[RMDB]
RNA sequence: GGGAACGACUCGAGUAGAGUCGAAAAUGAAAUAGCGUGUGCAAGACCCUGAUCUUGCCAUGAUCUGGAACUUUAGUGCUGAGGUCCGAGUUCCAGGGUAUCAUGUCGGACCUUAGCACUAAUUAAACAAUUCUAAGCUGUUCGCAGCUUAGAAUUGAAAAGAAACAACAACAACAAC
Reactivity to 2A3 in 0.01 (KOAc 150mM, MgCl2 10mM, bicine 150mM(pH8.5), 24C), signal-to-noise 3, nucleotides 027 to 126: u140g030a080a000a020u110a050g050c020g000u020g110u170g000c010a010a000g000a010c030c030c060u050g030a160u000c000u000u010g000c000c010a000u010g030a070u040c030u050g070g070a060a140c010u050u020u020a010g000u000g000c000u000g000a000g000g000u020c000c000g000a030g070u180u050c030c010a000g030g000g000u160a130u300c110a080u170g080u070c000g000g000a000c000c000u000u000a000g000c000a000c000u000a000a000u000u030a020a000a010
Reactivity to DMS in 0.01 (KOAc 150mM, MgCl2 10mM, bicine 150mM(pH8.5), 24C), signal-to-noise 4, nucleotides 027 to 126: u020g000a100a100a150u000a040g010c020g020u000g010u010g020c000a010a000g000a030c020c080c050u000g000a260u000c010u000u000g000c010c000a010u000g000a090u020c030u010g020g000a120a140c110u000u000u000a000g010u000g010c000u000g010a010g000g010u000c000c000g000a030g010u010u010c130c030a030g000g000g010u000a070u020c180a090u000g010u000c010g000g000a010c000c000u000u000a000g010c000a010c000u000a000a000u000u010a050a070a180
Annotation
This 177-nucleotide RNA was probed chemically with 2A3 and DMS. For 2A3 the reverse transcriptase was SuperScript II with manganese. For 2A3, 4,715 sequencing reads were counted. For DMS the reverse transcriptase was MarathonRT. The data come from the RNA Mapping Database (RMDB), library M2PK90. The reactions ran in a buffer of 150 mM KOAc, 10 mM MgCl2 and 150 mM bicine (pH 8.5), at 24 C.